[RMDB]
RNA sequence: GGGAACGACUCGAGUAGAGUCGAAAAGGGUUUGAGCCAUCGCCCGAAUAUGAUGGAUGAUACAAGUCGUCAUUGUACGCGACGUAGUACGUACUCAUUAGUGCGAAAGCACGGUUAGUCCGACUCGGCAGGGACGAUCUUCUGUCAAUACUUAGAAAAUGGGACUAUUAUUCGUAAUAGUCCCAUUAAAAGAAACAACAACAACAAC
Reactivity to DMS in 0.01 (KOAc 150mM, MgCl2 10mM, bicine 150mM(pH8.5), 24C), signal-to-noise 3, nucleotides 027 to 156: g000g020g030u000u010u000g010a060g030c040c060a110u000c040g030c020c020c010g010a060a070u010a030u000g010a040u010g010g020a080u000g010a110u000a070c150a080a190g020u000c010g030u000c020a130u000u010g060u000a050c070g030c020g000a060c060g010u010a110g020u000a050c030g020u000a020c010u000c070a090u000u010a120g040u000g020c020g010a130a120a200g020c000a020c030g020g020u000u010a060g020u010c000c000g000a110c010u000c040g010g050c020a140g010g000g010a060c030g000a060u000c060u000u000c030u000g000u000c030a050a120u010a050c070u000u010a110g010a090a090
Reactivity to 2A3 in 0.01 (KOAc 150mM, MgCl2 10mM, bicine 150mM(pH8.5), 24C), signal-to-noise 2, nucleotides 027 to 156: g070g020g020u090u130u150g090a050g060c010c020a040u080c030g010c010c020c010g050a090a090u300a110u090g020a000u010g030g000a020u060g040a010u070a040c100a100a000g070u030c010g000u030c060a050u010u160g060u090a060c040g040c060g100a070c050g000u010a010g000u020a110c010g000u000a000c000u020c010a010u010u140a100g000u000g000c030g040a080a010a000g000c000a000c000g010g000u020u050a020g000u000c030c000g010a010c030u030c020g000g000c000a000g060g000g010a020c020g010a050u000c000u070u000c010u070g020u020c000a020a080u090a180c120u070u100a010g120a060a180